[RMDB]
RNA sequence: GGGAACGACUCGAGUAGAGUCGAAAAAGCGGACGAUACGCAGCUUGAUCACGAGGGCGUCGAUGAUUUCCUGAGCCUCAUCCUCGGUGAUGAUGCCAGCGGCAAGAUCGCGCUCGAAGUAAAUGUCGGUACAUAUGCGGUUCGCCGCAUAUGUACCAAAAGAAACAACAACAACAAC
Reactivity to 2A3 in 0.01 (KOAc 150mM, MgCl2 10mM, bicine 150mM(pH8.5), 24C), signal-to-noise 3, nucleotides 027 to 126: a000g040c050g040g050a130c080g030a090u080a100c040g020c050a030g000c010u110u140g070a060u140c050a000c080g000a140g020g030g000c000g060u220c090g060a040u090g060a120u000u040u050c010c000u020g010a010g020c000c030u010c000a020u010c030c040u170c130g180g050u280g030a010u020g000a000u000g010c020c010a030g040c090g060g000c040a040a000g020a070u030c000g000c020g000c000u010c020g000a050a020g020u090a000a070a070u180g070u120c080
Reactivity to DMS in 0.01 (KOAc 150mM, MgCl2 10mM, bicine 150mM(pH8.5), 24C), signal-to-noise 2, nucleotides 027 to 126: a070g010c030g020g000a140c070g010a120u000a040c070g030c040a090g000c050u000u010g000a100u010c100a090c040g050a280g000g000g000c010g030u020c020g020a020u000g010a150u000u000u000c030c010u000g010a120g000c000c020u000c010a010u000c010c010u010c160g000g060u010g010a030u010g000a020u000g010c000c030a040g010c140g010g000c160a070a070g000a080u000c000g010c010g040c000u000c020g010a070a100g000u000a070a100a160u020g000u010c050